[RMDB]
RNA sequence: GGGAACGACUCGAGUAGAGUCGAAAAGGAAAAUCUAGGACACAUUCUGAGCUAUCUCCACAGAUCAGAAAUUGGGAAAUUGGAUGAGACAUCACUUCGUGCAGCAUUAAGUCUGACGUGUGCUGGACGCAAUACGCCAUUUCGAUGGCGUAUUGCGAAAAGAAACAACAACAACAAC
Reactivity to DMS in 0.01 (KOAc 150mM, MgCl2 10mM, bicine 150mM(pH8.5), 24C), signal-to-noise 3, nucleotides 027 to 126: g000g020a080a030a080a010u010c030u000a110g020g000a250c110a050c100a030u000u000c000u000g000a000g020c050u000a090u010c100u000c090c020a070c180a040g000a000u030c020a060g010a030a000a080u080u040g020g000g000a000a030a200u030u000g040g030a000u010g020a120g000a110c180a060u010c080a020c080u010u060c040g040u000g000c000a000g010c050a020u010u050a150a140g000u030c060u010g000a080c110g000u000g000u010g010c010u000g000g000a270
Reactivity to 2A3 in 0.01 (KOAc 150mM, MgCl2 10mM, bicine 150mM(pH8.5), 24C), signal-to-noise 3, nucleotides 027 to 126: g080g010a070a030a010a020u100c090u070a070g080g010a020c000a010c010a050u110u010c000u000g020a040g020c010u040a030u180c070u000c040c000a040c040a020g060a020u060c020a010g080a050a080a020u220u190g000g000g170a020a140a060u280u020g000g040a050u010g040a030g050a080c010a000u010c050a070c080u100u080c030g020u080g150c010a000g000c000a030u080u230a150a070g010u020c050u030g060a070c000g040u060g010u020g070c040u000g000g000a010
Structure probing data (DMS and 2A3) for a 177-nucleotide construct. The reactions ran in a buffer of 150 mM KOAc, 10 mM MgCl2 and 150 mM bicine (pH 8.5), at 24 C. The data come from the RNA Mapping Database (RMDB), library OK1LIB.